About this RNA:
Chemical mapping of a 177-nucleotide RNA with DMS and 2A3. The reactions ran in a buffer of 150 mM KOAc, 10 mM MgCl2 and 150 mM bicine (pH 8.5), at 24 C.

RNA sequence: GGGAACGACUCGAGUAGAGUCGAAAAGAUAUGGAUUGAACAUGCCGAAGAACGAUGUCGGAAACGACAUCGGGAGGAACUACAUGCAACAAUCCUAAGUCAAAAGGCAGUUGUUCGCAACUGCCAAUCUUUUAUUCUACUUCGGUAGAAUAAAAGAAAAAGAAACAACAACAACAAC
Reactivity to DMS in 0.01 (KOAc 150mM, MgCl2 10mM, bicine 150mM(pH8.5), 24C), signal-to-noise 4, nucleotides 027 to 126: g010a020u000a300u010g010g010a010u000u000g010a160a260c020a010u000g020c020c050g030a090a160g020a250a180c000g000a000u000g010u010c000g010g000a100a060a140c000g010a000c000a000u000c000g000g000g010a120g010g000a070a050c080u020a170c020a010u000g000c060a070a100c020a020a010u000c000c000u000a050a110g010u010c010a070a060a120a110g000g010c000a000g000u000u010g000u010u010c190g010c010a010a010c000u000g000c000c000a010a020
Reactivity to 2A3 in 0.01 (KOAc 150mM, MgCl2 10mM, bicine 150mM(pH8.5), 24C), signal-to-noise 3, nucleotides 027 to 126: g020a000u070a020u110g000g000a000u020u020g010a050a010c010a020u050g030c040c060g240a300a050g000a040a000c000g000a000u000g000u040c000g000g050a060a030a030c010g020a000c000a010u000c000g010g000g000a040g020g000a070a030c110u180a030c200a020u030g040c060a160a070c000a010a190u000c000c000u020a100a020g050u040c030a030a010a120a120g000g000c000a000g000u030u020g030u080u160c300g030c120a000a000c000u000g020c010c000a010a000
2A3 adducts were read by reverse transcription with SuperScript II with manganese. For DMS, 4,111 sequencing reads were counted. It was measured as part of the RMDB library TTRDEL.